[RMDB]
RNA sequence: GGGAACGACUCGAGUAGAGUCGAAAAGCAACAUCAAUACCAUAAUUAAGUAAUUCUGAGGCAAUUCUUAAAGUUUGGGCACUUACUCUAUGAUACCUAAAAUUACCAGUAUCUGUAAUUAAACCAACUAACACACAAAUUUCGAUUUGUGUGUUAGAAAAGAAACAACAACAACAAC
Reactivity to 2A3 in 0.01 (KOAc 150mM, MgCl2 10mM, bicine 150mM(pH8.5), 24C), signal-to-noise 5, nucleotides 027 to 126: g020c010a010a070c000a090u120c060a090a070u050a190c020c000a030u050a110a110u180u030a080a010g030u030a060a040u080u000c050u100g060a060g090g000c030a030a050u070u000c010u020u060a130a120a120g020u040u050u070g020g010g020c040a020c060u050u120a040c010u050c010u060a080u160g010a030u030a050c010c010u050a090a110a100a140u130u080a050c030c010a010g020u030a020u030c030u040g070u080a060a050u090u110a120a060a020c010c010a010a070
Reactivity to DMS in 0.01 (KOAc 150mM, MgCl2 10mM, bicine 150mM(pH8.5), 24C), signal-to-noise 5, nucleotides 027 to 126: g010c070a070a050c060a050u010c070a080a100u020a100c030c030a050u000a100a090u000u000a090a060g010u000a040a050u000u000c060u010g020a090g010g030c060a060a040u000u000c030u000u010a030a050a050g000u000u000u000g020g000g010c110a060c090u000u010a060c020u000c090u000a030u010g000a050u000a040c030c030u000a040a040a070a050u000u010a050c070c110a090g010u000a040u000c050u010g000u000a050a050u010u000a060a120a190c070c070a050a220
Background
This 177-nucleotide RNA was probed chemically with 2A3 and DMS. Reactivities are given for positions 27 through 126. For DMS the reverse transcriptase was MarathonRT. The DMS profile rests on 4,115 reads. High DMS reactivity at an A or C suggests that its Watson-Crick edge is free. For 2A3, 5,350 sequencing reads were counted. As a SHAPE reagent, 2A3 marks flexible, mostly unpaired nucleotides at the ribose 2'-OH.